[RMDB]
The data come from the RNA Mapping Database (RMDB), library OK2TRN. An RNA of 177 nucleotides, treated with 2A3 and DMS and read out base by base. For DMS, 1,111 sequencing reads were counted. The reactions ran in a buffer of 150 mM KOAc, 10 mM MgCl2 and 150 mM bicine (pH 8.5), at 24 C. 2A3 adducts were read by reverse transcription with SuperScript II with manganese.
RNA sequence: GGGAACGACUCGAGUAGAGUCGAAAAGGAUCGUGGUACACUCGAUCGAUCCAUGUGGUACGAUCGACUCUAGACUAGUCAUGAUCAUGCGAUCGGUACCGGAUCCGUCUAGAGAUGUACAGUACCACCACCCCGAGAAGUUCGCUUCUCGGGGUGGAAAAGAAACAACAACAACAAC
Reactivity to 2A3 in 0.01 (KOAc 150mM, MgCl2 10mM, bicine 150mM(pH8.5), 24C), signal-to-noise 1, nucleotides 027 to 126: g040g000a040u050c080g120u140g040g020u040a030c080a030c120u130c110g060a140u050c030g010a000u000c030c010a080u210g050u130g000g040u040a070c050g010a090u100c030g050a070c000u000c010u020a000g000a010c020u050a070g180u110c090a150u210g000a090u040c060a060u230g090c150g000a020u000c010g030g040u040a050c000c050g000g000a020u000c000c000g020u000c000u000a000g000a000g000a010u050g060u140a050c020a040g010u000a020c030c030a000
Reactivity to DMS in 0.01 (KOAc 150mM, MgCl2 10mM, bicine 150mM(pH8.5), 24C), signal-to-noise 1, nucleotides 027 to 126: g010g020a000u000c040g000u000g010g050u000a050c030a120c220u000c150g020a060u000c030g000a050u020c010c000a140u010g030u000g000g030u000a080c050g010a080u000c060g000a070c000u010c010u020a000g000a020c010u000a220g010u000c150a120u000g000a080u000c060a080u000g010c080g000a000u000c010g030g020u000a080c040c030g050g020a030u000c020c220g000u000c000u000a010g000a020g000a120u010g000u000a060c190a130g030u000a050c020c000a100